[RMDB]
RNA sequence: GGGAACGACUCGAGUAGAGUCGAAAAUUUGUGGAAGAGAAGAUAUCUGUGGGGUCUAAAACGAAGUACCACAAGUCCCCUUUAUAUGAUUUUUGUCCACAGGAGGUUAUUAAAUGUCCCACUAAGUAACACGAUCUACUUUCGAGUAGAUCGUGUUAAAAGAAACAACAACAACAAC
Reactivity to 2A3 in 0.01 (KOAc 150mM, MgCl2 10mM, bicine 150mM(pH8.5), 24C), signal-to-noise 3, nucleotides 027 to 126: u160u010u030g000u020g030g010a010a030g080a060g020a070a000g020a080u070a010u060c040u090g060u210g000g000g000g030u010c020u110a050a110a060a060c070g090a130a060g110u100a120c020c030a060c100a080a000g010u010c020c000c000c000u010u200u030a200u000a040u050g240a160u050u110u030u010u190g130u050c000c000a010c010a020g010g020a090g000g090u080u110a100u060u120a200a010a030u080g040u010c020c020c020a020c030u050a050a140g060u000
Reactivity to DMS in 0.01 (KOAc 150mM, MgCl2 10mM, bicine 150mM(pH8.5), 24C), signal-to-noise 2, nucleotides 027 to 126: u020u000u000g010u000g020g010a050a110g010a030g020a050a020g000a000u000a030u000c060u020g010u070g020g000g010g000u000c030u000a130a030a050a160c300g010a170a160g050u070a070c150c120a080c120a120a050g000u000c000c000c000c010u000u000u000a020u000a050u030g000a120u010u000u000u000u040g000u000c000c000a010c010a020g000g020a100g010g010u010u020a050u030u020a050a080a070u010g000u000c010c010c000a180c130u000a070a060g000u020
Source: RMDB library RFM100, as collected in RNAgym. Chemical mapping of a 177-nucleotide RNA with 2A3 and DMS. DMS adducts were read by reverse transcription with MarathonRT. The RNA was probed in 150 mM KOAc, 10 mM MgCl2 and 150 mM bicine (pH 8.5) at 24 C. For 2A3 the reverse transcriptase was SuperScript II with manganese.